Structure probing data (2A3) for a 177-nucleotide construct. The 2A3 profile rests on 936 reads. The RNA was probed in 150 mM KOAc, 10 mM MgCl2 and 150 mM bicine (pH 8.5) at 24 C. It was measured as part of the RMDB library M2PK50.

[RMDB]
RNA sequence: GGGAACGACUCGAGUAGAGUCGAAAAGUACCCUUGUUCGCAAGGGUACAAAGACAGACUUCACUGUCAUUAAGAAGGUAACAUCUCAGUUACAAUAAGAGAAAAGCACCUACUUCGGUAGGUGCAAGGAUCUCACACACUUCGGUGUGUGAGAUCCAAAAGAAACAACAACAACAAC
Reactivity to 2A3 in 0.01 (KOAc 150mM, MgCl2 10mM, bicine 150mM(pH8.5), 24C), signal-to-noise 1, nucleotides 027 to 126: g010u010a000c010c000c010u000u020g080u050u060c230g010c090a000a000g000g000g020u000a000c010a010a000a010g010a010c010a010g030a060c040u090u000c150a050c080u070g010u030c060a040u110u150a130a180g070a010a020g170g000u040a010a010c000a050u040c100u060c130a010g010u010u020a040c040a000a050u240a220a050g080a010g050a050a100a000a000g000c000a010c000c010u000a000c010u030u100c170g050g010u000a000g000g030u000g010c000a000a010